[RMDB]
RNA sequence: GGGAACGACUCGAGUAGAGUCGAAAAGCGGGUGGCUGUGCGCCUCCUCCGGGGUGAUCCGGCCUUCGUCGACCAGCGUUUGGACAAACGUGUCGUCCUUGGUGAUCUGCGUCAGCUCACCGUCGCGGUAGCGGACGAGGUUCGCCUCGUCCGCUACAAAAGAAACAACAACAACAAC
Reactivity to DMS in 0.01 (KOAc 150mM, MgCl2 10mM, bicine 150mM(pH8.5), 24C), signal-to-noise 2, nucleotides 027 to 126: g000c030g010g050g020u000g020g020c000u030g000u030g000c010g040c000c090u010c010c030u000c030c040g010g000g000g000u010g000a070u010c090c070g000g000c010c010u000u010c080g010u020c030g000a100c040c140a190g020c050g010u000u000u030g010g030a100c130a060a060a050c020g020u000g030u020c030g000u000c020c070u000u050g000g030u010g000a090u000c060u000g000c070g040u020c050a000g000c000u030c030a000c000c020g010u030c000g000c080g000
Reactivity to 2A3 in 0.01 (KOAc 150mM, MgCl2 10mM, bicine 150mM(pH8.5), 24C), signal-to-noise 5, nucleotides 027 to 126: g020c020g010g010g020u020g030g010c020u030g100u190g080c030g020c000c020u050c020c010u030c030c010g000g000g000g040u030g020a030u020c030c000g020g010c020c010u040u050c010g070u040c030g060a090c040c040a020g000c020g040u060u050u090g100g010a060c110a080a120a030c020g020u040g010u050c020g010u010c000c000u040u180g020g000u030g020a080u040c030u110g010c030g030u040c010a010g000c040u100c100a030c010c000g120u170c010g000c000g030